An RNA of 177 nucleotides, treated with DMS and 2A3 and read out base by base. The RNA was probed in 150 mM KOAc, 10 mM MgCl2 and 150 mM bicine (pH 8.5) at 24 C.
RNA sequence: GGGAACGACUCGAGUAGAGUCGAAAAUUAUGAACUAGAGAAGCACUGUUACGACUUGUUACGUGACUGUGAUGCUGUAGCUCCCCAUGAUUUCUUCAUCUUUGAUGUAGACAAAGUUAAAACACCUGAGAGAGUAUACGUUCGCGUAUACUCUCUCAAAAGAAACAACAACAACAAC
Reactivity to DMS in 0.01 (KOAc 150mM, MgCl2 10mM, bicine 150mM(pH8.5), 24C), signal-to-noise 1, nucleotides 027 to 126: u020u020a030u020g000a030a070c000u000a000g000a050g000a080a020g010c000a020c010u020g010u050u000a020c010g030a130c140u000u000g020u010u000a140c010g030u000g000a010c000u010g000u000g000a020u000g000c010u010g000u010a020g010c040u010c050c050c030c020a110u020g000a130u010u010u000c010u000u000c050a000u020c020u000u000u000g000a020u020g000u000a050g000a040c300a040a080a130g000u020u010a060a060a120a110c090a050c170c150u010
Reactivity to 2A3 in 0.01 (KOAc 150mM, MgCl2 10mM, bicine 150mM(pH8.5), 24C), signal-to-noise 1, nucleotides 027 to 126: u090u000a090u220g030a060a010c000u030a030g010a000g030a090a010g020c020a000c000u000g000u010u000a030c010g070a030c090u090u120g050u290u170a050c030g020u020g000a010c000u000g030u000g000a030u000g000c000u010g020u030a010g010c020u010c000c080c010c000a080u190g090a150u140u060u000c030u010u060c000a030u030c060u070u050u300g020a010u010g000u020a000g070a000c020a050a110a040g120u220u240a030a150a020a070c020a030c050c070u040

2A3 adducts were read by reverse transcription with SuperScript II with manganese. For DMS, 678 sequencing reads were counted. DMS adducts were read by reverse transcription with MarathonRT.